[RMDB]
Chemical mapping of a 177-nucleotide RNA with 2A3 and DMS. The data come from the RNA Mapping Database (RMDB), library TTRDES. DMS (dimethyl sulfate) methylates the pairing face of unpaired adenines and cytosines. The DMS profile rests on 3,521 reads. For 2A3, 9,139 sequencing reads were counted. DMS adducts were read by reverse transcription with MarathonRT. Conditions: 150 mM KOAc, 10 mM MgCl2 and 150 mM bicine (pH 8.5), 24 C.
RNA sequence: GGGAACGACUCGAGUAGAGUCGAAAAGAUAUGGAUCCAGGACGACGAGGAUCUGCUGGUCGGAAACGACCAGGCAGGGAGUCGCUGGAUCCUAAGUCAAAGUCUGUGACCUUCGGGUCACAGACAAGCUAGAUCACUAGUUCGCUAGUGAUCUAGCAAAAGAAACAACAACAACAAC
Reactivity to 2A3 in 0.01 (KOAc 150mM, MgCl2 10mM, bicine 150mM(pH8.5), 24C), signal-to-noise 2, nucleotides 027 to 126: g010a010u020a000u060g000g000a000u000c000c000a010g130g150a190c020g010a010c000g040a300g120g010a020u000c010u010g000c000u010g000g000u000c000g010g000a000a000a000c000g000a000c010c000a010g050g000c010a000g010g020g010a010g000u000c010g000c070u000g000g000a000u000c000c000u010a000a000g020u000c010a080a060a030g000u000c010u000g010u000g000a010c010c000u040u080c300g150g000g000u000c010a010c000a000g010a000c010a000a010
Reactivity to DMS in 0.01 (KOAc 150mM, MgCl2 10mM, bicine 150mM(pH8.5), 24C), signal-to-noise 2, nucleotides 027 to 126: g010a010u010a020u010g000g000a020u000c000c000a010g000g000a190c030g020a010c000g020a090g010g010a010u010c000u010g000c000u000g000g000u010c000g030g020a010a000a020c010g010a010c010c000a030g010g010c010a000g000g000g000a010g020u000c010g010c000u000g000g000a010u000c010c000u000a000a060g000u000c000a130a150a200g010u000c000u000g000u000g010a020c000c000u000u020c280g040g020g000u000c000a000c000a010g010a000c000a010a070